[RMDB]
An RNA of 177 nucleotides, treated with DMS and read out base by base.
Source: RMDB library TTRINS, as collected in RNAgym.
Conditions: 150 mM KOAc, 10 mM MgCl2 and 150 mM bicine (pH 8.5), 24 C.
Values are in units of 0.01, from 0 to 300, in steps of 10.

RNA sequence: GGGAACGACUCGAGUAGAGUCGAAAAGAUAUGGAGGGACGGUUGUGAUCCCUGUAGGGAGUAGUUUAAUCGGAAACGAUUAACUACAUCGAUCUACACAUGGGAUCACAACCGUCCCUCCUAAGUCCUAUUCGAAGAUGUUCGCAUCUUCGAAUAGAAAAGAAACAACAACAACAAC
Reactivity to DMS in 0.01 (KOAc 150mM, MgCl2 10mM, bicine 150mM(pH8.5), 24C), signal-to-noise 2, nucleotides 027 to 126: g010a090u020a250u030g010g010a040g000g000g000a010c010g010g000u010u000g020u010g010a010u000c000c000c000u000g020u010a030g010g030g020a030g010u000a010g010u010u000u010a010a010u000c000g030g000a130a150a300c010g010a010u000u000a010a010c000u000a000c010a250u000c180g030a130u010c000u000a010c020a100c300a120u010g000g010g030a030u010c000a000c010a000a000c010c000g000u000c000c000c000u000c000c000u010a010a060g010u000c030